[RMDB]
RNA sequence: GGGAACGACUCGAGUAGAGUCGAAAACACACAAGGUUCGCCUUGUGUGCAAGAAUAGACGAAUUCUACCGUAGAAGUAUUCAGGUCACAUAACUACGGAAAUGGCGUUCUGCUUCGGCAGAACGAACCAAGCGAACGAGUUCGCUCGUUCGCUUGGAAAAGAAACAACAACAACAAC
Reactivity to 2A3 in 0.01 (KOAc 150mM, MgCl2 10mM, bicine 150mM(pH8.5), 24C), signal-to-noise 2, nucleotides 027 to 126: c000a010c000a000c010a010a000g000g000u020u070c160g100c040c000u000u020g000u010g010u000g000c020a020a020g060a050a050u080a110g120a050c050g080a050a070u110u000c020u040a130c020c000g010u020a010g010a160a000g060u050a060u080u190c110a060g100g070u080c040a020c000a100u100a120a060c000u020a010c020g020g100a080a050a060u140g100g000c000g000u000u010c000u000g030c000u020u010c180g110g020c000a000g000a000a010c010g000a000a010
Reactivity to DMS in 0.01 (KOAc 150mM, MgCl2 10mM, bicine 150mM(pH8.5), 24C), signal-to-noise 2, nucleotides 027 to 126: c000a000c010a020c000a040a030g000g070u000u010c210g030c000c000u000u000g000u010g030u000g000c080a110a100g020a060a050u020a090g010a210c150g000a120a050u010u010c020u020a140c030c000g020u000a010g000a100a120g030u020a070u010u010c120a110g000g000u000c090a030c060a070u000a060a110c000u000a030c020g000g000a120a040a120u010g020g000c040g000u000u010c000u010g020c000u000u030c220g040g000c000a000g000a030a000c000g000a010a050